RNA sequence: GGGAACGACUCGAGUAGAGUCGAAAAUGAAGCAAAUCCAUAAUUGCCAAUGAUGAGCAAUUCGCUAUUACCGCCUAAAAACGGUUAGCCGGGGCUGCUAGAGCCUUGUUACCAAAGAUAGCCGGCGUUACGGCAUGAUGGUUCGCCAUCAUGCCAAUCAUUGCAUAUACUUCGGUAUAUGCAAUGAAAAAGAAACAACAACAACAAC
Reactivity to DMS in 0.01 (KOAc 150mM, MgCl2 10mM, bicine 150mM(pH8.5), 24C), signal-to-noise 3, nucleotides 027 to 156: u000g000a100a130g010c030a080a080a130u000c040c060a110u000a050a060u000u000g040c010c030a110a150u010g020a210u000g000a130g000c020a030a060u000u000c050g010c000u000a050u010u000a050c010c010g020c000c010u010a080a080a110a110a050c020g010g010u000u000a060g000c050c060g000g010g030g020c020u000g000c040u000a110g010a080g020c010c020u000u040g020u010u000a100c090c050a080a030a060g010a150u000a050g010c030c120g010g010c070g000u000u000a050c110g020g000c000a010u000g000a010u000g020g040u000u000c300g030c020c010a020u000c000a000u000g000c000c000a010a030
Reactivity to 2A3 in 0.01 (KOAc 150mM, MgCl2 10mM, bicine 150mM(pH8.5), 24C), signal-to-noise 6, nucleotides 027 to 156: u110g030a070a010g040c060a020a030a100u080c020c010a040u110a140a020u060u010g010c020c010a110a120u250g110a150u090g030a130g030c010a010a030u070u080c060g000c020u010a040u100u150a040c010c020g010c020c020u070a050a030a000a000a000c010g000g000u020u030a000g010c010c020g010g010g010g000c040u080g020c050u090a050g020a010g130c000c000u010u020g040u070u060a060c020c030a030a040a020g070a050u060a020g050c030c030g030g030c040g040u100u150a040c080g000g000c000a000u000g000a000u000g000g080u040u070c220g040c050c000a000u000c000a000u000g010c000c000a000a000